[RMDB]
RNA sequence: GGGAACGACUCGAGUAGAGUCGAAAAGUCUCCACAAAAAAUAAAAUUAGCCAGGCAUGGUGACAUGUGCCUGUAGUCUUAGCUACUCAGGAGGCUGAGGUGGGAGAAUUGCUUGAGCCCAGGAGUUUGAGGUUAUUGUGGGCCAGGAUGACACACAGCUCAUAAAAUUAUUCGUAAUUUUAUGAGCAAAAGAAACAACAACAACAAC
Reactivity to 2A3 in 0.01 (KOAc 150mM, MgCl2 10mM, bicine 150mM(pH8.5), 24C), signal-to-noise 2, nucleotides 027 to 156: g000u000c000u000c010c010a050c050a070a290a020a040a000a010u240a100a030a060a090u210u110a020g040c020c000a000g010g040c000a000u000g020g050u160g140a030c060a100u200g030u080g040c020c050u020g000u020a000g030u010c020u050u110a040g000c030u030a000c030u030c110a060g000g010a030g020g020c020u030g020a050g000g010u060g010g010g010a090g030a040a150u090u140g040c000u010u020g020a030g000c000c000c000a020g010g070a050g050u000u140u180g000a010g020g050u120u030a050u080u110g080u070g020g010g000c020c000a010g060g010a020u100g010a000c030a010c100a000c030a070
Reactivity to DMS in 0.01 (KOAc 150mM, MgCl2 10mM, bicine 150mM(pH8.5), 24C), signal-to-noise 1, nucleotides 027 to 156: g010u010c000u010c000c060a250c100a000a030a120a080a100a100u020a020a030a080a160u010u000a070g000c170c030a070g010g010c010a020u000g000g010u100g020a110c120a110u000g040u010g000c000c000u040g010u000a030g000u010c040u000u000a090g010c010u000a040c020u000c040a100g030g020a100g030g030c020u000g020a060g000g020u000g000g030g000a050g000a080a070u000u010g030c040u000u030g000a090g020c040c020c020a100g000g010a130g030u000u000u000g010a110g000g040u000u000a040u000u010g050u010g020g030g000c000c010a100g030g000a100u000g010a100c010a080c040a040c050a140
An RNA of 207 nucleotides, treated with 2A3 and DMS and read out base by base.
The RNA was probed in 150 mM KOAc, 10 mM MgCl2 and 150 mM bicine (pH 8.5) at 24 C.
The data come from the RNA Mapping Database (RMDB), library OK3TST.
The DMS profile rests on 1,859 reads.
For 2A3 the reverse transcriptase was SuperScript II with manganese.
DMS adducts were read by reverse transcription with MarathonRT.